Chemical mapping of a 177-nucleotide RNA with 2A3 and DMS.
The RNA was probed in 150 mM KOAc, 10 mM MgCl2 and 150 mM bicine (pH 8.5) at 24 C.
DMS adducts were read by reverse transcription with MarathonRT.

RNA sequence: GGGAACGACUCGAGUAGAGUCGAAAAAUACACAACGAGACUAACCUGUAGGGUGGCAAGGGCUCGAAGAGGGAUCCCCGGGGAAACCUACUCUAUCGAGGCGGAGAUCGAGCGCCAGUUCGUGCGCGUAAUUAUCUCGGUUCGCCGAGAUAAUUACAAAAGAAACAACAACAACAAC
Reactivity to 2A3 in 0.01 (KOAc 150mM, MgCl2 10mM, bicine 150mM(pH8.5), 24C), signal-to-noise 2, nucleotides 027 to 126: a000u160a040c050a000c040a090a220c060g020a000g040a110c010u090a010a090c000c010u060g150u200a100g010g090g000u050g020g000c040a190a130g080g050g000c020u010c040g050a040a030g090a010g110g090g010a090u100c000c020c010c000g020g000g000g030a000a060a050c000c030u030a060c010u080c010u000a130u150c050g020a020g060g000c010g030g020a040g020a050u080c100g030a020g030c020g040c010c020a040g010u100u140c090g050u140g090c020g000c000
Reactivity to DMS in 0.01 (KOAc 150mM, MgCl2 10mM, bicine 150mM(pH8.5), 24C), signal-to-noise 2, nucleotides 027 to 126: a120u000a110c080a070c100a060a130c070g010a040g010a100c010u010a100a090c050c030u010g020u000a080g010g000g000u000g010g020c050a130a060g000g010g040c040u000c060g020a050a130g020a160g030g000g000a120u000c030c030c020c040g000g000g000g020a050a050a080c060c030u000a060c010u000c010u000a020u010c010g010a040g000g030c070g000g000a100g000a100u010c030g030a100g010c020g030c000c050a060g000u000u000c100g000u000g010c030g020c040